[RMDB]
RNA sequence: GGGAACGACUCGAGUAGAGUCGAAAACCCAGACCGUUCGCGGUCUGGGAAAACCGGAAUAAACAUGGGCCGAUGAGCCGAACCGGAAGGGCGUCCGCCCAAAAACUUGUGUCUUCGGACACAAGAAGUUGUCCUAAUUCUUCGGAAUUAGGACAACAAAAGAAACAACAACAACAAC
Reactivity to DMS in 0.01 (KOAc 150mM, MgCl2 10mM, bicine 150mM(pH8.5), 24C), signal-to-noise 2, nucleotides 027 to 126: c010c000c000a000g000a020c000c010g000u000u000c220g030c000g000g020u000c000u000g010g000g000a000a010a080a120c010c000g010g000a250a120u000a090a030a130c140a100u020g000g000g020c010c100g030a120u010g010a170g000c000c010g010a050a110c130c040g000g010a130a080g000g000g000c030g010u010c070c160g000c010c000c020a040a040a120a110a140c000u000u000g010u000g000u010c000u000u020c160g020g000a040c000a000c000a000a000g000a070a040
Reactivity to 2A3 in 0.01 (KOAc 150mM, MgCl2 10mM, bicine 150mM(pH8.5), 24C), signal-to-noise 3, nucleotides 027 to 126: c000c000c000a000g010a010c020c000g020u040u050c200g010c000g120g010u000c000u010g000g010g000a040a040a010a020c000c000g020g050a100a150u200a140a110a010c100a270u130g030g000g010c000c040g220a190u120g060a050g110c030c020g030a050a040c030c030g050g050a060a050g060g000g000c000g050u020c050c060g040c000c000c010a100a050a000a000a010c000u000u000g000u000g000u030c000u010u080c250g110g000a000c000a000c000a000a000g000a000a010